RNA sequence: GGGAACGACUCGAGUAGAGUCGAAAAGAUUGUUGAGAAGGGCAAAGCCGUGUGCGAUGAUGACGUUCAAGUAGUGCUGUGUGGGAGUUCCUCUACUUCUUCUGUGGAAGAAGUUAGUAAGGAAGCAGUUUGCUAGACAAUUCGUUGUCUAGCAAACAAAAGAAACAACAACAACAAC
Reactivity to DMS in 0.01 (KOAc 150mM, MgCl2 10mM, bicine 150mM(pH8.5), 24C), signal-to-noise 3, nucleotides 027 to 126: g020a140u000u010g000u000u000g000a070g030a090a080g000g000g010c050a070a100a120g030c040c040g020u000g020u000g010c050g000a060u010g010a060u000g010a100c080g020u000u010c090a060a090g010u010a060g020u010g000c040u000g030u000g030u010g000g010g010a130g000u010u000c000c010u000c020u000a020c000u000u000c000u000u000c000u000g010u000g020g000a020a010g000a010a010g000u010u010a010g000u010a100a070g010g000a040a070g010c140a090
Reactivity to 2A3 in 0.01 (KOAc 150mM, MgCl2 10mM, bicine 150mM(pH8.5), 24C), signal-to-noise 2, nucleotides 027 to 126: g020a090u110u140g030u060u070g060a080g000a080a060g020g020g010c050a070a090a000g010c050c060g050u070g020u050g040c070g010a070u060g040a050u080g030a080c050g000u040u080c100a070a040g040u060a010g010u070g090c010u020g000u010g010u050g040g020g020a020g050u030u000c000c000u000c000u000a000c000u000u000c000u010u000c000u070g240u300g220g000a010a000g000a000a000g000u000u120a000g010u010a010a030g000g020a020a030g060c030a020
Structure probing data (DMS and 2A3) for a 177-nucleotide construct. The DMS profile rests on 4,736 reads. The RNA was probed in 150 mM KOAc, 10 mM MgCl2 and 150 mM bicine (pH 8.5) at 24 C. The data come from the RNA Mapping Database (RMDB), library OK2TST. 2A3 is a SHAPE reagent: it acylates the 2'-hydroxyl of flexible nucleotides of all four kinds. 2A3 adducts were read by reverse transcription with SuperScript II with manganese.